[RMDB]
RNA sequence: GGGAACGACUCGAGUAGAGUCGAAAAGAUAUGGACAGAGGUCCCUUGAAACUAUCGGUUCGGAAACGAACCGACGAAUUUCAGGGACCGACGAAGUCCUAAGUCAAAAGUAAGGUUCGCCUUACAACAAAUAUCAACCCUUCGGGGUUGAUAUUUGAAAAGAAACAACAACAACAAC
Reactivity to 2A3 in 0.01 (KOAc 150mM, MgCl2 10mM, bicine 150mM(pH8.5), 24C), signal-to-noise 1, nucleotides 027 to 126: g000a000u060a080u210g010g000a000c030a000g180a100g060g000u030c000c000c000u060u300g000a000a030a000c080u070a010u030c000g020g050u060u000c000g000g000a060a070a030c000g020a000a010c070c000g030a020c000g010a140a300u040u010u010c000a010g000g000g000a000c060c010g000a010c000g030a030a010g010u010c010c000u000a110a040g050u040c060a060a030a030a180g040u000a010a030g000g010u000u150c210g100c060c000u020u000a000c030a010a010
Reactivity to DMS in 0.01 (KOAc 150mM, MgCl2 10mM, bicine 150mM(pH8.5), 24C), signal-to-noise 2, nucleotides 027 to 126: g000a030u000a300u000g000g000a000c000a070g020a190g010g000u000c000c000c000u000u020g000a010a010a020c080u000a130u000c000g020g000u000u000c000g000g020a080a090a200c000g010a010a020c030c000g030a000c060g000a060a100u010u000u000c000a010g010g000g010a000c010c000g000a030c130g000a090a080g010u000c000c000u010a060a070g020u030c030a080a070a090a110g000u010a000a000g010g000u000u010c270g000c030c000u000u000a000c010a050a230